RNA sequence: GGGAACGACUCGAGUAGAGUCGAAAACAUCCACUGCUACGGCAGUGGAUGAACGAGGUAGGUACGCCUACCUCGAAAGUGGGAUGUACACAUAUACAUUAAACGUCCAUGGUACGCCAUGGACGAAGAUCCCACUCCGAUUCGUCGGAGUGGGAUCAAAAGAAACAACAACAACAAC
Reactivity to 2A3 in 0.01 (KOAc 150mM, MgCl2 10mM, bicine 150mM(pH8.5), 24C), signal-to-noise 2, nucleotides 027 to 126: c010a000u040c000c010a010c000u000g000c000u010a070c190g160g000c010a010g020u000g000g010a000u010g000a010a000c020g000a000g000g020u010a010g020g000u030a030c200g070c050c000u010a010c000c000u010c010g000a020a020a010g020u040g000g110g010a010u010g040u060a020c020a000c030a080u140a020u020a200c030a020u050u080a060a100a060c010g010u000c010c000a010u030g010g000u060a040c210g030c050c000a000u000g010g000a010c000g000a000a000
Reactivity to DMS in 0.01 (KOAc 150mM, MgCl2 10mM, bicine 150mM(pH8.5), 24C), signal-to-noise 1, nucleotides 027 to 126: c000a010u000c000c000a040c010u000g020c010u000a040c300g010g010c020a010g040u000g020g000a010u000g000a040a110c030g010a030g000g020u000a000g020g010u000a120c260g020c000c000u010a000c000c010u020c030g020a000a020a110g030u000g000g000g000a020u000g030u000a000c050a010c060a180u020a130u020a030c030a030u010u000a020a090a150c000g000u000c000c000a000u000g010g000u000a160c180g040c000c000a010u000g010g010a000c000g010a000a020
Conditions: 150 mM KOAc, 10 mM MgCl2 and 150 mM bicine (pH 8.5), 24 C. This 177-nucleotide RNA was probed chemically with 2A3 and DMS. DMS adducts were read by reverse transcription with MarathonRT.